[RMDB]
RNA sequence: GGGAACGACUCGAGUAGAGUCGAAAAGAUUCCUCGUUGUUGAGCGAGGUUUAAACAAAUCGACCACACAAACGUAGAGCCGACUACGGAUUUAUAAAUUAAGGCAUUAAGUGUGUUAAGGAGACAAAAAACGAUGUUGUGUUCGCACAACAUCGAAGCUAUGUGUAUACUUCGGUAUACACAUAGCAAAAGAAACAACAACAACAAC
Reactivity to 2A3 in 0.01 (KOAc 150mM, MgCl2 10mM, bicine 150mM(pH8.5), 24C), signal-to-noise 4, nucleotides 027 to 156: g080a120u190u100c000c000u000c000g000u010u010g000u010u010g000a000g000c010g000a000g030g000u060u140u020a010a010a010c060a000a010a010u000c000g000a000c000c000a010c000a010c020a020a190a020c010g000u000a000g000a000g000c010c010g100a010c010u000a000c000g010g010a020u040u300u020a180u160a080a020a010u110u110a000a010g020g000c000a000u090u210a180a100g000u000g000u000g000u040u030a030a040g130g020a060g030a030c130a060a100a020a000a020a010c020g000a010u000g000u000u000g000u000g020u060u040c180g060c070a000c000a000a000c000a000u000c000g000a020a000
Reactivity to DMS in 0.01 (KOAc 150mM, MgCl2 10mM, bicine 150mM(pH8.5), 24C), signal-to-noise 2, nucleotides 027 to 156: g030a300u000u010c010c000u020c070g030u000u000g050u000u000g000a160g010c000g010a090g000g000u000u000u000a040a080a130c100a030a090a060u000c000g010a160c030c020a080c030a230c000a130a140a110c050g000u000a020g010a120g050c020c070g000a080c010u000a040c000g010g000a210u000u020u000a050u000a040a030a070u000u000a030a090g000g020c000a220u000u010a050a180g000u000g010u000g010u010u000a110a170g000g000a130g010a100c080a010a070a030a110a060a130c040g020a030u010g000u000u010g060u000g010u000u030c300g030c000a000c020a010a000c000a000u000c000g040a000a100

Notes
An RNA of 207 nucleotides, treated with 2A3 and DMS and read out base by base. The DMS profile rests on 2,780 reads. For DMS the reverse transcriptase was MarathonRT. It was measured as part of the RMDB library M2RFPK. 2A3 adducts were read by reverse transcription with SuperScript II with manganese. The reactions ran in a buffer of 150 mM KOAc, 10 mM MgCl2 and 150 mM bicine (pH 8.5), at 24 C.